Chemical mapping of a 207-nucleotide RNA with DMS and 2A3. In probing experiments dimethyl sulfate is read out at A N1 and C N3, which are open when not base-paired. Source: RMDB library OK3TST, as collected in RNAgym.
[RMDB]
RNA sequence: GGGAACGACUCGAGUAGAGUCGAAAAAUCAUUGUCAUCAUCUUCAUACAAUGCCUACAGCAUGCAAGGUGUAUACAAGCAGCUAGGACAGGGCAGUUCACCAGUAGAAUUUGUGCCAAAGUAGGACAGAUGGGUGAUAAGCUGCUAAAAUGCAUGAAAACGGCAGUCUAUUCGUAGACUGCCGUUUAAAAGAAACAACAACAACAAC
Reactivity to DMS in 0.01 (KOAc 150mM, MgCl2 10mM, bicine 150mM(pH8.5), 24C), signal-to-noise 1, nucleotides 027 to 156: a090u010c070a080u000u010g020u000c070a080u020c030a200u010c020u030u000c060a090u000a090c160a070a100u020g020c000c000u000a080c170a300g020c030a140u000g020c060a110a040g010g030u020g000u000a130u020a060c040a110a110g000c040a020g000c000u000a120g000g000a100c020a060g000g000g000c020a030g000u010u000c060a030c040c000a060g100u000a110g000a070a070u000u020u000g020u000g060c020c010a020a030a160g020u000a130g020g000a090c080a070g010a090u000g000g020g040u020g000a020u020a050a150g000c020u030g020c090u060a080a020a050a050u000g010c100a080u010g000a100
Reactivity to 2A3 in 0.01 (KOAc 150mM, MgCl2 10mM, bicine 150mM(pH8.5), 24C), signal-to-noise 2, nucleotides 027 to 156: a000u200c110a050u060u060g070u040c050a070u010c000a000u010c040u100u000c030a000u060a110c030a120a170u010g000c000c000u030a040c020a000g030c030a060u080g030c030a040a040g200g010u010g030u020a020u040a080c000a030a040g000c000a010g030c030u090a060g000g070a020c090a030g020g060g000c010a000g000u000u040c020a020c020c010a000g000u040a010g120a120a060u050u120u030g040u070g050c000c000a010a200a000g160u120a160g050g000a000c010a050g050a040u110g060g030g000u000g000a000u020a060a020g030c030u060g000c000u000a000a120a000a000u100g020c020a000u130g000a020